[RMDB]
Structure probing data (2A3) for a 207-nucleotide construct.

RNA sequence: GGGAACGACUCGAGUAGAGUCGAAAACAUUAGGUUUCGCAGAAAAUAGUCUUGAGGAGAUACCUGAAAAAGCGCUAGAGCCUCUAACAUCACUUAAUUUUAUCGACUUAUCUCAAAAUAAUUUAGCACUACUGCCAAAAACAAUAGAAAAAUUGCAGUAUACUCAUCAGUUCGCUGAUGAGUAUACAAAAGAAACAACAACAACAAC
Reactivity to 2A3 in 0.01 (KOAc 150mM, MgCl2 10mM, bicine 150mM(pH8.5), 24C), signal-to-noise 2, nucleotides 027 to 156: c040a030u030u110a020g000g050u020u080u130c060g000c040a020g130a060a110a120a130u070a120g020u040c030u090u030g000a000g050g040a070g010a030u040a090c010c000u000g030a030a030a010a030a100g030c040g000c030u030a030g030a020g100c010c000u000c040u020a060a020c010a090u090c010a020c050u070u050a060a100u070u030u010u070a110u050c010g020a010c010u030u060a090u080c030u010c080a060a060a050a100u060a100a100u070u120u070a050g000c020a000c020u080a020c020u090g030c030c000a030a000a040a060a040c030a030a070u210a160g190a110a060a040a050a030u300u300g000c010a010